[RMDB]
The record gives the reactivity of an RNA of 177 nucleotides to 2A3 and DMS.

RNA sequence: GGGAACGACUCGAGUAGAGUCGAAAAAACUGGCACAUCUCCACGAGGUUGUAAGGAAGGUGAAAAGAUCGCUCUUAAUUAGAUUAAAAACAUUGUUUUCUUCCUGUGUCAUUUUGCCCUGAAAAUCAAAAAUACACUGGUUCGCCAGUGUAUUUUUAAAAGAAACAACAACAACAAC
Reactivity to 2A3 in 0.01 (KOAc 150mM, MgCl2 10mM, bicine 150mM(pH8.5), 24C), signal-to-noise 5, nucleotides 027 to 126: a010a010c030u000g000g000c020a020c000a020u070c000u020c070c020a140c140g030a090g070g020u150u100g100u250a030a030g010g030a010a020g010g040u130g080a040a030a020a020g060a030u070c050g030c060u040c030u100u080a130a160u130u130a120g060a100u060u130a100a050a000a010a010c030a040u040u110g060u030u220u030u040c020u010u020c000c020u050g010u020g010u000c000a000u010u040u040u080g020c000c000c000u030g130a080a020a000a060u130c040
Reactivity to DMS in 0.01 (KOAc 150mM, MgCl2 10mM, bicine 150mM(pH8.5), 24C), signal-to-noise 7, nucleotides 027 to 126: a020a020c110u000g010g010c010a010c020a080u000c030u010c030c120a150c180g010a070g010g010u010u010g010u020a110a050g000g000a020a010g010g010u020g010a050a020a060a100g000a040u010c090g020c140u020c120u010u020a060a070u020u020a100g010a300u010u010a020a040a050a040a110c080a080u010u010g000u010u000u010u010c010u000u000c000c010u000g010u000g000u010c000a030u000u010u000u000g000c020c000c000u010g010a060a050a060a100u030c140
The RNA was probed in 150 mM KOAc, 10 mM MgCl2 and 150 mM bicine (pH 8.5) at 24 C. For 2A3 the reverse transcriptase was SuperScript II with manganese. For DMS the reverse transcriptase was MarathonRT.